[RMDB]
RNA sequence: GGGAACGACUCGAGUAGAGUCGAAAAAAGCACGGGUGAGAACUCGUGUGGACCGUUCAGUAACGAAAAUCCUGGUCAUAGUAGCAGCGUUAGUCGGGUUAGACCCCCGACGGCCGAACGAGUAAGGGCAUGAAUUCCGUUUCGACGGAAUUCAUGCAAAAGAAACAACAACAACAAC
Reactivity to DMS in 0.01 (KOAc 150mM, MgCl2 10mM, bicine 150mM(pH8.5), 24C), signal-to-noise 1, nucleotides 027 to 126: a000a160g000c000a050c040g000g000g030u000g000a300g000a090a000c000u020c010g020u000g000u000g100g000a220c140c020g010u020u000c120a110g030u040a050a120c080g000a080a050a060a090u000c030c020u000g040g000u010c010a100u020a100g000u020a060g000c030a020g000c070g000u050u000a110g000u000c000g040g000g060u080u000a110g000a190c160c280c000c000c000g000a020c000g000g000c000c020g110a060a030c050g000a080g000u000a180a120g050g000
Reactivity to 2A3 in 0.01 (KOAc 150mM, MgCl2 10mM, bicine 150mM(pH8.5), 24C), signal-to-noise 1, nucleotides 027 to 126: a010a000g050c020a000c000g070g000g040u000g000a050g000a050a000c000u000c000g000u010g000u010g000g000a010c000c000g000u050u050c020a030g040u020a000a150c110g100a180a050a000a040u190c020c040u020g000g020u150c010a000u050a150g110u110a000g060c090a030g000c070g060u060u120a050g000u000c010g000g000g050u000u040a050g010a060c030c020c000c010c000g000a000c050g000g000c000c000g020a050a020c050g000a030g060u110a000a080g060g090